[RMDB]
RNA sequence: GGGAACGACUCGAGUAGAGUCGAAAAUCAACCGCGUGUAGACAAGAACAUGCUAAUCUUAACGAUGAAACAAGCUAGCUUGUUGGCACAAGUGACAUUCGGUGAAGCUAUUAAGAUAUGCUACACAGGUGAUUACCGCAUUCGUGCGGUAAUCACCAAAAGAAACAACAACAACAAC
Reactivity to 2A3 in 0.01 (KOAc 150mM, MgCl2 10mM, bicine 150mM(pH8.5), 24C), signal-to-noise 1, nucleotides 027 to 126: u090c000a000a090c050c030g000c060g000u000g000u020a040g010a020c070a090a010g040a110a030c070a030u070g020c000u020a040a030u060c020u040u100a070a070c060g060a050u070g070a030a130a020c070a110a010g010c020u020a020g020c000u000u030g040u040u030g050g000c060a020c000a030a100g050u050g150a030c030a110u000u140c100g140g000u030g090a020a010g000c010u060a030u170u150a100a010g060a070u080a070u200g000c000u030a010c040a010c010a030
Reactivity to DMS in 0.01 (KOAc 150mM, MgCl2 10mM, bicine 150mM(pH8.5), 24C), signal-to-noise 1, nucleotides 027 to 126: u000c010a150a060c040c040g080c220g040u000g000u010a080g000a020c000a020a090g000a070a080c140a120u010g010c000u020a190a050u000c080u030u040a110a130c300g020a050u000g010a200a110a180c090a040a060g000c220u000a230g010c050u000u000g010u000u000g000g020c020a040c010a090a100g000u000g010a060c120a040u000u010c000g010g020u040g010a140a050g050c050u000a080u000u050a040a070g020a070u000a020u020g010c000u000a060c070a000c080a110
Chemical mapping of a 177-nucleotide RNA with 2A3 and DMS. High DMS reactivity at an A or C suggests that its Watson-Crick edge is free. The 2A3 profile rests on 949 reads. For 2A3 the reverse transcriptase was SuperScript II with manganese. For DMS the reverse transcriptase was MarathonRT. It was measured as part of the RMDB library OK2TST.